[RMDB]
RNA sequence: GGGAACGACUCGAGUAGAGUCGAAAACCCAAUGUGCGCCAUUAACAUUGUUUAUGCAAGCACGUUUCGCAAUGUACGGCGCAGAAACAUUGCCAACACAAAUACGCUUCACGAUGUGCGGCACAGAAAAAGCUCGCGCACUUCGGUGCGCGAGCAACUAUACUCUCUGCUUCGGCAGAGAGUAUAGAAAAGAAACAACAACAACAAC
Reactivity to 2A3 in 0.01 (KOAc 150mM, MgCl2 10mM, bicine 150mM(pH8.5), 24C), signal-to-noise 1, nucleotides 027 to 156: c000c000c000a000a020u170g010u000g020c000g010c010c020a000u130u110a050a000c020a030u050u090g090u250u190u180a110u120g000c040a040a100g100c080a020c160g010u050u050u080c000g000c000a040a000u000g000u020a060c160g050g000c090g070c020a000g000a020a070a000c020a010u070u240g030c020c050a170a100c020a090c030a060a160a080u160a150c020g040c070u100u180c060a020c090g120a060u070g010u050g040c090g020g000c020a010c040a050g160a080a080a030a020a000g020c010u000c000g080c050g000c000a000c100u130u060c260g050g000u020g070c010g000c000g000a000g020c000a000a000